[RMDB]
RNA sequence: GGGAACGACUCGAGUAGAGUCGAAAACAAGUUCGUGCUUGCGACUGACACGUAGGGCGAGGGGUGGGCGAAAGUUGCCAUGAGACCGUAACUUUCGUAGUCAUUGAUAAAGGGGCAGGUCUCGCUCAAAAGACGUUGGUCUUCGGACCAACGUCAACGGUGACUAUUACUUCGGUAAUAGUCACCGAAAAGAAACAACAACAACAAC
Reactivity to 2A3 in 0.01 (KOAc 150mM, MgCl2 10mM, bicine 150mM(pH8.5), 24C), signal-to-noise 2, nucleotides 027 to 156: c040a040a020g020u080u050c050g030u110g070c020u050u080g070c030g150a080c120u030g060a010c000a030c080g000u000a000g000g000g070c110g060a130g000g010g010g120u300g000g000g000c000g000a010a000a000g010u000u000g000c050c050a140u170g020a010g000a000c010c010g000u020a010a000c000u040u010u000c010g010u000a010g010u000c090a080u100u230g080a050u140a090a100a010g010g010g000g030c000a030g000g010u020c000u010c000g030c040u090c080a130a120a000a010g000a000c000g000u020u000g030g010u000c000u030u080c220g080g000a000c020c000a000a000c000g010u000c000a030a000